About this RNA:
The record gives the reactivity of an RNA of 207 nucleotides to 2A3 and DMS. Conditions: 150 mM KOAc, 10 mM MgCl2 and 150 mM bicine (pH 8.5), 24 C. The data come from the RNA Mapping Database (RMDB), library RNAMAK. For 2A3, 2,259 sequencing reads were counted. DMS adducts were read by reverse transcription with MarathonRT.
RNA sequence: GGGAACGACUCGAGUAGAGUCGAAAACUAGUGUUCGCACUAGAAAAAACCGUAGGGACUUGGAUUUAUAGGUUAUGUACCUACCCACCUUCGAAAGAGGAGGGUACUAAGACCUAUUGUCAGUCCCUAAACGGAAAAAGUCCUGUUCGCAGGACAACUUUCCUCCUAUGUUCGCAUAGGAGGAAAGAAAAGAAACAACAACAACAAC
Reactivity to 2A3 in 0.01 (KOAc 150mM, MgCl2 10mM, bicine 150mM(pH8.5), 24C), signal-to-noise 3, nucleotides 027 to 156: c000u000a020g000u000g010u090u120c300g030c070a000c020u020a000g080a100a150a000a000a000a050c000c020g030u020a010g000g010g030a000c040u110u200g130g020a080u290u300u080a030u070a000g010g010u030u010a050u160g010u000a010c000c010u100a120c040c020c010a150c030c030u150u180c110g220a300a090a070g030a030g000g010a020g000g020g010u000a000c000u000a080a100g020a040c000c000u000a000u010u010g000u000c000a000g010u000c010c000c000u000a000a010a000c000g000g060a020a110a000a090a000g040u020c020c000u010g030u020u100c230g020c070a010g000g000a000c010a010a010
Reactivity to DMS in 0.01 (KOAc 150mM, MgCl2 10mM, bicine 150mM(pH8.5), 24C), signal-to-noise 1, nucleotides 027 to 156: c000u020a000g000u000g020u000u010c280g060c000a030c000u000a030g050a020a070a030a210a140a130c010c000g040u020a000g010g000g010a060c000u000u010g040g040a090u000u000u000a050u000a000g000g010u010u000a300u000g040u000a020c000c000u000a060c020c030c020a170c040c020u000u000c000g020a090a120a300g000a000g050g040a300g000g020g030u000a000c000u010a060a220g000a000c000c000u000a010u020u000g010u000c010a060g000u000c020c010c010u000a000a000a070c040g020g020a050a030a100a120a080g050u000c010c000u000g000u000u000c280g030c010a000g000g030a000c020a010a060